[RMDB]
RNA sequence: GGGAACGACUCGAGUAGAGUCGAAAAUAACGGACUAGGAAACUCGAUCUUUUAAGUGGUAAUCCUAGCGAAUCCACGGCGAGGAAACUAGGACACUAACCAUGUGUUCCCGGACGCUAGAAGAAAAUAACUAGAGAAUCUUCGGAUUCUCUAGUUAAAAAGAAACAACAACAACAAC
Reactivity to 2A3 in 0.01 (KOAc 150mM, MgCl2 10mM, bicine 150mM(pH8.5), 24C), signal-to-noise 2, nucleotides 027 to 126: u080a000a030c050g000g060a030c010u040a030g100g070a180a190a030c010u020c010g060a140u070c090u000u290u120u190a270a040g000u010g020g000u000a040a060u030c010c000u010a020g010c010g020a000a020u030c010c040a090c120g070g040c160g000a000g000g000a040a060a020c010u010a010g040g010a020c020a000c100u070a070a040c030c000a020u110g030u000g010u030u040c020c010c000g040g060a050c020g020c050u050a020g040a130a010g050a050a220a030a050
Reactivity to DMS in 0.01 (KOAc 150mM, MgCl2 10mM, bicine 150mM(pH8.5), 24C), signal-to-noise 3, nucleotides 027 to 126: u010a110a130c150g010g010a050c020u000a050g010g010a170a160a120c030u000c010g010a100u010c040u020u000u000u010a100a120g020u000g000g000u010a100a160u000c020c010u000a020g010c030g000a280a080u000c000c000a060c070g000g030c080g010a070g000g000a070a130a120c010u000a010g000g000a080c080a050c100u000a090a100c070c090a050u000g010u000g000u000u000c000c000c010g000g010a100c090g000c050u000a030g010a130a090g010a060a040a050a080
Structure probing data (2A3 and DMS) for a 177-nucleotide construct. For DMS the reverse transcriptase was MarathonRT. The reactions ran in a buffer of 150 mM KOAc, 10 mM MgCl2 and 150 mM bicine (pH 8.5), at 24 C.